Structure probing data (2A3) for a 177-nucleotide construct. Conditions: 150 mM KOAc, 10 mM MgCl2 and 150 mM bicine (pH 8.5), 24 C.

[RMDB]
RNA sequence: GGGAACGACUCGAGUAGAGUCGAAAAACAUCAAUAUUGGACAGCAUAAUGGAGGAUAUGAAAGGUCCCGUCCCGUCGAGCCAGACACAUUUCAAAGUGGAUCUCCCUUAUGACUAUGAAAAGCAGCCGCGAAUGCACGUUUCGACGUGCAUUCGCGAAAAGAAACAACAACAACAAC
Reactivity to 2A3 in 0.01 (KOAc 150mM, MgCl2 10mM, bicine 150mM(pH8.5), 24C), signal-to-noise 2, nucleotides 027 to 126: a000c050a130u240c020a100a010u070a240u050u180g080g000a000c050a000g020c030a150u100a050a050u160g050g000a000g050g000a110u000a050u180g140a170a080a030g100g030u000c000c010c020g000u000c090c000c000g000u060c140g050a000g000c000c110a000g100a050c010a000c000a050u150u260u110c040a080a040a000g070u150g070g030a100u040c000u080c050c000c040u050u100a110u000g000a000c010u010a080u100g240a070a030a010a030g040c110a000g000c010